[RMDB]
This 177-nucleotide RNA was probed chemically with 2A3 and DMS. For 2A3 the reverse transcriptase was SuperScript II with manganese. High DMS reactivity at an A or C suggests that its Watson-Crick edge is free.
RNA sequence: GGGAACGACUCGAGUAGAGUCGAAAAGAUAUGGAGAGGCAUGGACAUGGGACAUCGGAAACGAUGUGCCAACAGCCAUGCUCUCCUAAGUCAAAGCCACUUAAUAACUUCGGUUAUUAAGUGGCAACACGAGUUGCAAGUUCGCUUGCAACUCGUGAAAAGAAACAACAACAACAAC
Reactivity to 2A3 in 0.01 (KOAc 150mM, MgCl2 10mM, bicine 150mM(pH8.5), 24C), signal-to-noise 1, nucleotides 027 to 126: g040a020u050a040u110g020g000a030g010a020g080g290c010a010u010g010g020a270c080a220u060g000g040g030a020c000a000u020c020g050g000a010a010a020c010g000a010u000g050u030g110c000c020a070a030c090a020g000c000c010a000u000g000c000u010c000u000c000c000u000a000a020g040u020c040a090a050a050g020c000c010a000c000u000u010a000a000u000a010a000c020u060u080c300g140g000u000u000a000u000u000a010a010g000u010g010g000c030a000a000
Reactivity to DMS in 0.01 (KOAc 150mM, MgCl2 10mM, bicine 150mM(pH8.5), 24C), signal-to-noise 2, nucleotides 027 to 126: g010a000u000a300u010g000g020a000g010a060g030g020c010a000u000g020g000a090c190a280u010g010g010g000a020c000a000u000c020g000g000a060a090a160c010g010a010u000g010u000g010c000c000a040a020c300a190g020c000c010a000u000g010c000u000c010u000c000c000u010a020a060g000u020c030a060a070a150g000c000c000a000c010u000u000a000a010u000a020a020c000u010u020c300g000g010u000u000a000u000u000a000a010g040u000g000g020c030a020a010